Chemical mapping of a 177-nucleotide RNA with 2A3 and DMS. Conditions: 150 mM KOAc, 10 mM MgCl2 and 150 mM bicine (pH 8.5), 24 C. Reactivities are given for positions 27 through 126. Source: RMDB library RFM100, as collected in RNAgym.

RNA sequence: GGGAACGACUCGAGUAGAGUCGAAAAUUUGCAGACUGAGGAAUUGGCCUCUGUAGGGACCUGAUUUUUGAGUUACUUUCCGCCCGCUUGCCUCCCUUCCCCCUCCAAGUGGCACUGUAAAACUCAGUUAGGCAUCACAUUUCGAUGUGAUGCCUAAAAAAGAAACAACAACAACAAC
Reactivity to 2A3 in 0.01 (KOAc 150mM, MgCl2 10mM, bicine 150mM(pH8.5), 24C), signal-to-noise 1, nucleotides 027 to 126: u090u130u120g020c110a010g000a040c000u060g000a000g040g000a030a090u000u090g070g010c000c000u020c020u010g030u020a040g060g000g000a020c000c020u040g070a150u040u030u080u080u110g150a100g050u030u090a070c100u010u060u000c040c000g000c010c000c000g040c100u010u140g000c000c020u000c000c000c000u020u010c000c000c000c000c000u030c000c000a060a000g000u000g060g000c040a000c090u000g000u020a000a000a000a040c000u000c040a000g000
Reactivity to DMS in 0.01 (KOAc 150mM, MgCl2 10mM, bicine 150mM(pH8.5), 24C), signal-to-noise 2, nucleotides 027 to 126: u050u100u020g000c100a080g000a100c050u000g000a100g030g020a120a110u000u000g000g020c060c010u010c040u040g020u020a040g000g010g010a080c080c060u030g010a060u000u000u020u020u020g000a040g030u000u000a040c130u000u020u000c030c030g030c000c020c070g050c080u000u000g000c020c020u000c020c020c030u000u000c020c000c030c010c000u000c000c020a130a060g030u000g040g010c050a090c060u020g000u020a000a020a020a090c030u010c080a050g000